[RMDB]
RNA sequence: GGGAACGACUCGAGUAGAGUCGAAAAGCAGUCAGUUCGCUGACUGCAAAAAAGCGUACUACUACGACAUGGAUGCGUUGGGAGUCCCAAAUAGGACGAAGAACAACCGGCAUCCAACAGCGUAGUAUCGCAAAAAAGUCGUCGUUCGCGACGACAACUUUAUAUCCUGCUUCGGCAGGAUAUAAAGAAAAGAAACAACAACAACAAC
Reactivity to 2A3 in 0.01 (KOAc 150mM, MgCl2 10mM, bicine 150mM(pH8.5), 24C), signal-to-noise 2, nucleotides 027 to 156: g000c000a000g000u000c000a010g000u010u130c200g050c160u000g000a000c000u030g000c000a000a000a110a000a000a000g060c070g030u100a100c060u000a000c000u010a000c010g110a050c050a100u090g000g000a000u000g000c020g010u010u040g020g000g000a040g010u000c040c000c000a110a300a040u240a080g010g010a000c040g100a240a070g030a090a010c020a010a020c080c210g160g000c010a000u000c000c000a010a000c030a010g020c000g000u000a000g000u010a010u080c000g000c000a050a030a000a000a080a000g030u020c010g000u000c000g030u040u090c200g000c010g130a000c000g000a000c000a000a000
Reactivity to DMS in 0.01 (KOAc 150mM, MgCl2 10mM, bicine 150mM(pH8.5), 24C), signal-to-noise 2, nucleotides 027 to 156: g000c010a000g050u000c000a000g020u020u050c300g100c060u000g010a060c010u010g150c010a000a010a030a060a070a090g010c030g060u010a060c180u010a010c000u000a030c000g020a040c070a300u010g020g000a010u020g030c010g010u000u010g000g000g030a290g030u010c000c000c060a050a090a160u000a040g000g000a040c010g010a110a110g000a080a170c030a080a100c010c110g000g000c000a010u010c010c020a000a020c080a170g000c020g040u010a020g000u010a000u000c040g020c020a000a020a110a060a060a060g020u010c000g010u000c020g010u000u030c260g040c020g000a050c010g000a000c010a020a010

About this RNA
Chemical mapping of a 207-nucleotide RNA with 2A3 and DMS. Conditions: 150 mM KOAc, 10 mM MgCl2 and 150 mM bicine (pH 8.5), 24 C. For 2A3, 2,493 sequencing reads were counted. High 2A3 reactivity points to a flexible backbone, as in loops and unpaired stretches. 2A3 adducts were read by reverse transcription with SuperScript II with manganese. The data come from the RNA Mapping Database (RMDB), library RNAMAK.